[RMDB]
RNA sequence: GGGAACGACUCGAGUAGAGUCGAAAAUCUGUUUACAAGUUAUCGUUAAGUCCAUGUCUGGCUACGAUUCCGUAAACAGAAGCCAGUUUGCGUCAAGCCCGACAUGGACUCUUGGCAGAACUGAUCACGUCCACUAAUCAUUCGUGAUUAGUGGACGAAAAGAAACAACAACAACAAC
Reactivity to 2A3 in 0.01 (KOAc 150mM, MgCl2 10mM, bicine 150mM(pH8.5), 24C), signal-to-noise 2, nucleotides 027 to 126: u000c010u030g040u040u130u130a070c030a020a020g020u070u060a210u230c110g040u090u210a090a000g010u010c010c000a000u000g020u000c000u010g020g000c000u060a080c120g050a000u180u000c140c040g000u000a000a020a020c010a020g130a090a000g080c020c000a070g000u000u000u000g010c020g020u040c060a030a010g020c000c040c020g020a020c000a020u010g000g010a020c010u020c000u000u010g020g060c010a010g010a050a050c030u100g050a090u130c080a010
Reactivity to DMS in 0.01 (KOAc 150mM, MgCl2 10mM, bicine 150mM(pH8.5), 24C), signal-to-noise 3, nucleotides 027 to 126: u000c020u010g000u000u000u030a100c060a040a060g000u000u000a050u000c150g020u020u000a100a080g010u000c000c010a010u000g010u000c030u000g000g000c000u000a060c140g010a100u010u000c230c040g010u010a000a000a010c010a110g010a100a070g010c150c110a120g020u000u000u010g020c000g010u000c070a090a030g010c020c010c050g000a000c020a010u000g000g000a010c020u000c020u000u000g000g000c020a050g000a030a050c050u000g000a080u000c140a140